[RMDB]
RNA sequence: GGGAACGACUCGAGUAGAGUCGAAAAUUCUUAUCGCGAGGUACAACGGCGAUGAUCGGUCUCCUGUCCGCUAUCACCAGAGAACCUAGCAGGUCCGGUAGGAUCUGUUCGUAUCCGGUGCCUACCAGCACGUGGAAGAGUGUUACGUGUGCGCAGACUCCUCUCUUAUCUUCGGAUAAGAGAGGAGAAAAGAAACAACAACAACAAC
Reactivity to 2A3 in 0.01 (KOAc 150mM, MgCl2 10mM, bicine 150mM(pH8.5), 24C), signal-to-noise 2, nucleotides 027 to 156: u090u000c010u010u050a040u100c020g010c030g000a010g030g000u130a060c080a160a120c080g100g000c060g020a050u050g060a090u190c070g020g030u030c010u040c070c050u070g030u060c010c020g000c040u020a040u160c010a020c050c010a010g040a010g010a090a030c000c020u030a010g000c000a010g000g020u010c000c010g000g210u160a100g120g050a000u020c000u000g010u060u020c020g010u020a070u030c020c000g030g000u040g000c000c010u050a080c030c030a010g030c010a010c070g040u060g010g040a140a020g030a070g120u170g000u090u150a020c030g010u010g030u050g000c050g000c010a010g040a180
Reactivity to DMS in 0.01 (KOAc 150mM, MgCl2 10mM, bicine 150mM(pH8.5), 24C), signal-to-noise 1, nucleotides 027 to 156: u010u030c050u000u000a090u000c030g020c060g030a110g020g070u010a110c080a090a100c010g040g080c000g030a100u000g020a040u030c040g040g020u000c040u000c060c000u000g040u010c040c040g040c100u000a050u000c050a050c030c020a090g030a110g020a060a160c090c030u030a100g020c020a030g000g000u020c010c020g040g030u000a150g030g000a030u000c000u010g010u000u000c080g020u000a120u000c000c020g030g030u010g060c100c040u000a090c070c050a180g000c020a010c040g040u000g030g000a100a090g010a070g000u010g010u010u000a200c060g000u000g030u000g000c040g030c040a080g000a250